[RMDB]
RNA sequence: GGGAACGACUCGAGUAGAGUCGAAAAUGACUGUGAACCGCUAUGACGAAGCGUAUCGUAUGAGCCGGAACCUCGACUCCGAAGGCUUCGACGUGCUGCUGGUCCAGGGCAGCCCGCUGUCCGGGCGGCUCAUUUGACAAUUCGUUGUCAAAUGAGCAAAAGAAACAACAACAACAAC
Reactivity to 2A3 in 0.01 (KOAc 150mM, MgCl2 10mM, bicine 150mM(pH8.5), 24C), signal-to-noise 6, nucleotides 027 to 126: u070g020a020c030u040g040u080g190a080a060c020c000g000c030u060a030u100g030a020c010g020a020a000g010c040g090u130a110u110c010g020u130a150u230g000a010g010c010c010g050g080a190a250c040c070u130c050g020a030c010u000c010c010g020a060a020g080g000c000u010u000c010g020a020c000g010u030g100c140u040g000c040u140g060g010u000c010c020a050g020g030g010c010a020g020c020c020c030g010c070u070g030u050c060c010g020g020g020c010g040
Reactivity to DMS in 0.01 (KOAc 150mM, MgCl2 10mM, bicine 150mM(pH8.5), 24C), signal-to-noise 7, nucleotides 027 to 126: u010g010a140c040u000g010u010g010a070a080c050c020g000c020u010a040u010g010a100c020g000a040a030g010c020g020u000a090u000c020g010u010a130u000g000a030g050c010c000g020g010a120a130c230c090u010c020g000a030c030u000c020c010g010a080a130g000g000c020u000u000c020g010a080c020g010u000g000c160u000g010c020u010g030g000u000c030c040a050g000g000g010c040a080g010c010c020c040g020c110u000g010u000c110c010g010g000g030c070g030
Description: Conditions: 150 mM KOAc, 10 mM MgCl2 and 150 mM bicine (pH 8.5), 24 C. An RNA of 177 nucleotides, treated with 2A3 and DMS and read out base by base. For DMS the reverse transcriptase was MarathonRT. For 2A3 the reverse transcriptase was SuperScript II with manganese. It was measured as part of the RMDB library OK2TRN. Values cover nucleotides 27 to 126.